[RMDB]
RNA sequence: GGGAACGACUCGAGUAGAGUCGAAAACAGUUUGGCUUGCUUUUAUGGUCUUUAUGUCUGUUUCUUACUUUGCUCAACUCUUUAACUUUUGUUAAGAAAUGAUCAUCUGCCAGCUCAAUUUCAAAGAUCAAUAUCUCUGGUUCGCCAGAGAUAUUGAAAAAGAAACAACAACAACAAC
Reactivity to DMS in 0.01 (KOAc 150mM, MgCl2 10mM, bicine 150mM(pH8.5), 24C), signal-to-noise 2, nucleotides 027 to 126: c060a060g020u000u000u010g000g020c030u010u000g000c140u000u000u000u000a040u020g000g010u000c010u000u000u000a040u010g000u000c040u000g010u000u000u000c020u000u000a090c090u000u010u000g010c070u010c070a070a090c150u000c040u000u000u000a010a040c050u000u000u010u010g010u000u000a020a040g010a050a090a140u000g010a060u000c030a050u000c120u000g020c020c020a050g020c020u010c090a030a070u000u000u000c060a040a050a080g010a210
Reactivity to 2A3 in 0.01 (KOAc 150mM, MgCl2 10mM, bicine 150mM(pH8.5), 24C), signal-to-noise 2, nucleotides 027 to 126: c040a010g020u030u070u040g020g000c000u010u020g070c010u020u130u120u210a100u130g020g020u000c000u050u100u030a150u110g080u030c040u060g030u000u040u010c020u020u030a080c020u010u080u090g020c020u040c020a010a100c010u050c000u080u140u110a030a060c010u070u070u210u220g010u020u010a050a030g010a020a090a050u110g010a010u020c000a020u010c030u020g000c000c020a020g020c050u050c050a050a100u050u050u070c060a060a080a000g050a030